[RMDB]
RNA sequence: GGGAACGACUCGAGUAGAGUCGAAAAGCUCGGAGACGAGCAAGGCUGACAAAACCCUGUCCCAACCUCCACGUGGUGUCGGCUGGAUAAUGCUGCAUUAUGUUGCAUUUAUCAACUGGGAACAAAAGAUACUGAGGGAUUUCGAUCCCUCAGUAUCAAAAGAAACAACAACAACAAC
Reactivity to 2A3 in 0.01 (KOAc 150mM, MgCl2 10mM, bicine 150mM(pH8.5), 24C), signal-to-noise 9, nucleotides 027 to 126: g000c000u010c000g010g030a100g020a060c030g000a000g010c000a000a040g030g000c010u020g010a020c030a020a250a070a130c020c000c000u010g050u030c010c000c000a020a040c010c030u070c030c050a110c100g100u130g030g020u030g010u030c010g010g010c020u020g060g000a010u020a030a010u020g010c010u020g010c020a070u120u140a140u300g020u030u020g000c010a020u050u070u110a030u020c010a010a040c050u060g000g010g040a050a020c050a040a080a010a030
Reactivity to DMS in 0.01 (KOAc 150mM, MgCl2 10mM, bicine 150mM(pH8.5), 24C), signal-to-noise 3, nucleotides 027 to 126: g010c030u010c050g010g000a120g010a220c010g010a020g000c000a080a060g000g000c020u000g000a110c090a100a040a080a060c030c000c020u010g020u000c000c000c020a070a090c050c030u010c040c030a150c140g020u040g000g010u030g010u010c010g010g000c000u010g030g020a050u010a030a000u000g010c020u000g000c020a150u040u000a100u020g060u000u000g010c000a010u020u010u060a030u000c040a070a060c070u000g030g000g000a060a080c110a050a040a030a120
Description
Structure probing data (2A3 and DMS) for a 177-nucleotide construct. High 2A3 reactivity points to a flexible backbone, as in loops and unpaired stretches. Reactivities are given for positions 27 through 126.